[RMDB]
RNA sequence: GGGAACGACUCGAGUAGAGUCGAAAAGGAACCAGUGAGUCCAGGCAGUGCUGUCAUGUGCAGACCAAUGUCUAGGAAUGGAAGCUGGAGACAGAUAGGCCUCACUAGUUUGAAGGCACUGGCUACCAGGGAAGAGAAGUUUCGACUUCUCUUCCCUAAAAGAAACAACAACAACAAC
Reactivity to 2A3 in 0.01 (KOAc 150mM, MgCl2 10mM, bicine 150mM(pH8.5), 24C), signal-to-noise 1, nucleotides 027 to 126: g070g000a040a000c010c040a010g030u070g090a040g070u060c000c030a000g020g000c010a020g020u000g150c020u000g030u010c040a150u280g130u150g040c050a000g020a090c050c000a060a140u040g000u030c020u070a160g000g010a060a040u060g060g030a040a060g030c030u020g000g010a020g020a000c000a010g110a020u200a090g110g000c000c010u000c000a020c020u090a080g060u110u110u120g060a090a060g000g020c000a030c050u000g010g010c000u000a100c000c030
Reactivity to DMS in 0.01 (KOAc 150mM, MgCl2 10mM, bicine 150mM(pH8.5), 24C), signal-to-noise 3, nucleotides 027 to 126: g000g010a120a110c010c010a100g010u000g000a100g020u000c010c020a040g000g020c010a050g000u000g000c040u000g000u000c050a130u000g020u020g020c090a040g020a070c060c060a040a160u000g030u000c010u000a210g020g000a100a070u000g060g010a070a250g010c020u010g000g000a080g000a050c030a030g000a130u000a130g000g000c010c010u000c040a060c080u010a070g010u000u000u000g000a070a070g020g020c010a080c000u000g000g020c020u000a150c060c030